[RMDB]
RNA sequence: GGGAACGACUCGAGUAGAGUCGAAAAGGUACGUCGGCUGCCCGAUCGGAGACUGAGGCGCCAGUACGGAACCGAGAGGGUGUUGGUCCCCACUGCAUAAGGACCGAAGCCAACACACCAGCAGCAAUCAACUCAUGCGCUUCGGUGCAUGGGUUGAAAAAGAAACAACAACAACAAC
Reactivity to DMS in 0.01 (KOAc 150mM, MgCl2 10mM, bicine 150mM(pH8.5), 24C), signal-to-noise 9, nucleotides 027 to 126: g000g020u000a120c140g010u000c060g010g010c000u020g020c010c010c010g010a190u010c040g000g010a110g000a120c040u010g000a140g010g010c060g010c040c020a040g000u010a110c110g010g010a190a120c010c000g000a040g000a270g000g000g020u010g000u020u030g010g010u000c010c010c050c060a120c070u010g000c110a100u020a170a120g000g000a040c030c020g010a140a070g010c010c010a040a030c040a190c090a060c010c000a130g000c100a060g000c250a110a130
Reactivity to 2A3 in 0.01 (KOAc 150mM, MgCl2 10mM, bicine 150mM(pH8.5), 24C), signal-to-noise 9, nucleotides 027 to 126: g030g010u040a020c050g020u020c020g030g000c030u100g010c010c010c000g010a040u050c040g050g030a080g050a080c030u060g040a080g110g040c040g020c040c010a010g010u060a090c030g020g030a050a020c000c000g010a020g020a020g030g030g000u060g040u120u180g030g010u040c010c010c000c010a100c060u120g010c030a090u080a200a060g020g000a000c010c020g020a030a000g010c000c010a020a000c030a000c010a070c010c020a020g040c020a000g020c020a040a120
Chemical mapping of a 177-nucleotide RNA with DMS and 2A3. Reactivities are given for positions 27 through 126. The DMS profile rests on 75,727 reads. The RNA was probed in 150 mM KOAc, 10 mM MgCl2 and 150 mM bicine (pH 8.5) at 24 C. Source: RMDB library OK1LIB, as collected in RNAgym.